[RMDB]
RNA sequence: GGGAACGACUCGAGUAGAGUCGAAAAGGAUGCAACGUAGUAAUAUGUGUGAUUGCUAGCUCAUGAAUUGCACAUUACUAGUCGUAAUUUGAUACAUGAGCUAGAUCGAGUUACGACAUCUGUAUCGCUACAAGAGACUAUUCGUAGUUUCUUGUAGAAAAGAAACAACAACAACAAC
Reactivity to DMS in 0.01 (KOAc 150mM, MgCl2 10mM, bicine 150mM(pH8.5), 24C), signal-to-noise 9, nucleotides 027 to 126: g000g000a010u000g010c010a050a090c260g010u000a030g010u000a040a040u000a080u010g020u010g020u010g010a050u010u010g010c020u000a010g000c010u000c010a020u000g010a100a100u000u010g000c100a030c080a020u000u000a010c010u000a140g010u010c210g000u000a000a000u000u000u000g000a040u000a220c060a020u000g000a010g010c010u000a010g000a030u000c010g000a090g010u000u000a010c010g000a050c030a070u000c130u000g020u000a030u000c030g010
Reactivity to 2A3 in 0.01 (KOAc 150mM, MgCl2 10mM, bicine 150mM(pH8.5), 24C), signal-to-noise 9, nucleotides 027 to 126: g030g000a000u010g000c010a020a020c040g020u020a020g010u010a020a050u050a110u160g140u010g040u050g060a070u020u110g040c010u000a010g000c000u010c020a020u060g070a050a070u140u120g020c010a010c000a010u000u010a010c030u040a030g120u050c040g000u000a000a000u010u010u030g010a010u010a030c030a040u030g010a000g000c010u010a000g000a000u010c010g010a010g010u010u000a010c010g020a010c010a010u020c040u020g010u010a010u010c000g000